[RMDB]
RNA sequence: GGGAACGACUCGAGUAGAGUCGAAAAACCUGGGAACAACGUGUUGAAGAAAGUGAGGUUGCAACUAUUGAUUUACAAGCUGUAGAAUUAGAUCAAACACCUGCUCCUACAACAAUUCAAGGUCACAAUUUCUCCCUCUUACUCACCGGUAACACAAGGAGGAAGGAGUUUUCGAACUCCUUCCUCCAAAAGAAACAACAACAACAAC
Reactivity to 2A3 in 0.01 (KOAc 150mM, MgCl2 10mM, bicine 150mM(pH8.5), 24C), signal-to-noise 1, nucleotides 027 to 156: a000c060c000u030g020g020g000a130a020c030a000a040c050g080u080g010u130u060g050a060a050g000a180a010a000g020u030g090a010g030g030u050u040g000c010a000a030c060u090a090u160u000g030a010u030u090u090a150c120a090a020g110c030u020g020u120a010g010a100a040u190u090a040g010a070u100c020a050a050a000c080a070c040c000u010g000c000u040c010c000u010a060c000a070a050c030a040a080u040u070c050a060a010g020g000u030c010a010c030a060a070u050u060u080c030u020c010c060c000u060c020u030u050a080c030u090c090a010c170c000g070g000u180a040a000c050a010c030a140a150